The record gives the reactivity of an RNA of 177 nucleotides to DMS and 2A3. Conditions: 150 mM KOAc, 10 mM MgCl2 and 150 mM bicine (pH 8.5), 24 C. The DMS profile rests on 802 reads. DMS (dimethyl sulfate) methylates the pairing face of unpaired adenines and cytosines.

RNA sequence: GGGAACGACUCGAGUAGAGUCGAAAAGAAGAGAGCGUUGCACACACUCAGACUGUACGACAGUCUGACACACACCUACGCUAGUGCAUCGUGUGUGUGAUAUCGAUGUUGCACGAAGAUGAGGAAAACUCUCGAUGGCGUUCGCGCCAUCGAGAGUAAAAGAAACAACAACAACAAC
Reactivity to DMS in 0.01 (KOAc 150mM, MgCl2 10mM, bicine 150mM(pH8.5), 24C), signal-to-noise 1, nucleotides 027 to 126: g000a060a060g000a060g000a060g020c040g020u000u000g010c020a010c030a020c020a080c190u000c030a000g000a060c000u010g020u000a180c280g000a100c010a040g040u010c000u010g000a010c090a000c030a080c000a050c050c020u010a050c140g000c080u010a090g050u000g000c020a050u000c140g000u030g000u000g010u010g020u000g000a060u000a120u040c150g000a060u000g010u000u010g040c000a050c040g020a030a160g030a070u010g000a030g000g000a050a030a040
Reactivity to 2A3 in 0.01 (KOAc 150mM, MgCl2 10mM, bicine 150mM(pH8.5), 24C), signal-to-noise 1, nucleotides 027 to 126: g090a020a000g070a020g000a000g050c030g020u030u080g000c000a030c000a000c000a000c010u000c050a000g000a010c010u010g000u120a170c160g160a090c240a000g000u000c000u000g000a000c000a000c000a000c020a010c000c060u130a040c060g000c050u050a060g080u050g210c020a080u040c050g000u020g000u000g010u000g000u000g270a060u030a010u150c070g010a150u030g010u080u080g000c030a020c010g000a010a010g060a120u120g020a090g050g000a050a070a050
For DMS the reverse transcriptase was MarathonRT. For 2A3, 1,109 sequencing reads were counted.